[RMDB]
RNA sequence: GGGAACGACUCGAGUAGAGUCGAAAAAAGUGUAUUAAGAUGGAAAGGGAAACUAGGACCAUGACGUGGUUUUUGUAAGAAUGCUAGCAGGGUACACACAAGAAGAGUAAUUGCACUGGAUUAGAAACCAUUCGCCGUAUUUCGAUACGGCGAAUGGAAAAGAAACAACAACAACAAC
Reactivity to DMS in 0.01 (KOAc 150mM, MgCl2 10mM, bicine 150mM(pH8.5), 24C), signal-to-noise 1, nucleotides 027 to 126: a040a050g040u000g060u000a020u000u000a090a130g010a160u020g000g020a050a110a080g060g010g000a080a190a080c040u030a120g020g000a050c000c000a160u000g020a200c200g070u010g020g000u000u000u040u020u070g000u000a030a020g010a010a030u020g000c020u000a020g090c040a000g000g010g020u000a010c070a070c010a040c140a090a040g000a050a060g000a150g000u030a080a100u000u020g000c050a030c040u020g000g000a220u020u000a020g000a140a040a100
Reactivity to 2A3 in 0.01 (KOAc 150mM, MgCl2 10mM, bicine 150mM(pH8.5), 24C), signal-to-noise 1, nucleotides 027 to 126: a000a000g080u040g000u000a100u010u100a140a060g090a070u050g020g000a100a000a120g040g020g030a130a100a070c000u000a000g010g070a000c000c000a010u010g060a090c070g010u100g000g100u000u000u000u000u020g070u000a050a030g020a200a000u050g000c000u000a020g000c010a000g000g020g000u100a090c080a000c000a000c000a010a010g060a020a090g040a070g000u130a110a050u100u100g030c010a040c070u020g000g040a110u180u140a090g090a050a070a000